Chemical mapping of a 177-nucleotide RNA with 2A3 and DMS. It was measured as part of the RMDB library M2PK50. For 2A3, 985 sequencing reads were counted. Reactivities are given for positions 27 through 126. The RNA was probed in 150 mM KOAc, 10 mM MgCl2 and 150 mM bicine (pH 8.5) at 24 C.
RNA sequence: GGGAACGACUCGAGUAGAGUCGAAAACUUUUCAACUUCGGUUGAAAAGAACCUGCGGGCUGCUCGCAGUUAAGUCUAACUCCUCCUCUGAGUCAUCGGGCGUUAUAUAAUCAUUCGUGAUUAUAAAAUACACAACUUUUUUCGAAAAGUUGUGUAUAAAAGAAACAACAACAACAAC
Reactivity to 2A3 in 0.01 (KOAc 150mM, MgCl2 10mM, bicine 150mM(pH8.5), 24C), signal-to-noise 1, nucleotides 027 to 126: c000u060u000u000u000c010a000a000c000u060u080c210g280g000u000u000g000a000a000a010a010g000a030a040c010c000u000g010c060g000g070g050c110u140g000c030u070c010g000c030a000g000u020u080a070a080g080u070c090u080a000a070c010u020c010c000u030c000c010u000c050u060g000a010g040u040c000a060u050c020g080g040g000c020g010u240u000a070u030a010u000a080a000u000c000a030u060u130c100g010u010g020a000u000u010a000u020a010a030a000
Reactivity to DMS in 0.01 (KOAc 150mM, MgCl2 10mM, bicine 150mM(pH8.5), 24C), signal-to-noise 2, nucleotides 027 to 126: c010u000u000u000u000c000a000a000c000u000u020c180g030g010u000u010g000a000a020a000a020g000a120a130c100c050u010g040c030g010g000g010c080u010g020c030u000c020g010c060a040g020u000u000a070a110g010u000c090u010a120a130c020u000c030c020u020c140c030u010c030u000g000a110g010u000c030a060u010c060g010g010g030c090g000u000u020a080u010a020u000a020a010u000c000a020u010u030c090g020u000g000a020u000u000a010u000a020a050a130